[RMDB]
RNA sequence: GGGAACGACUCGAGUAGAGUCGAAAAUCACGCGGUAGGAGCAAGCCCAUAGCGAUAGGGGGAGAUGCUGGGAGUUAGAGGAGACCUUAGGGGAGACCGAAGCGAGGAGGAAAGCAAAGAAAGCAACCAUUCUACAAACCUUCGGGUUUGUAGAAUGAAAAGAAACAACAACAACAAC
Reactivity to DMS in 0.01 (KOAc 150mM, MgCl2 10mM, bicine 150mM(pH8.5), 24C), signal-to-noise 1, nucleotides 027 to 126: u000c050a080c100g000c100g000g030u020a100g000g010a100g030c050a050a100g040c010c000c030a050u020a120g030c100g010a090u000a080g000g000g010g050g000a070g000a070u000g000c060u040g000g000g030a130g000u020u000a060g010a080g000g010a180g000a050c100c020u000u000a070g030g010g010g010a160g010a050c040c000g050a130a040g020c080g030a050g020g040a050g000g000a070a050a160g000c070a020a080a120g020a120a020a080g000c110a040a070c240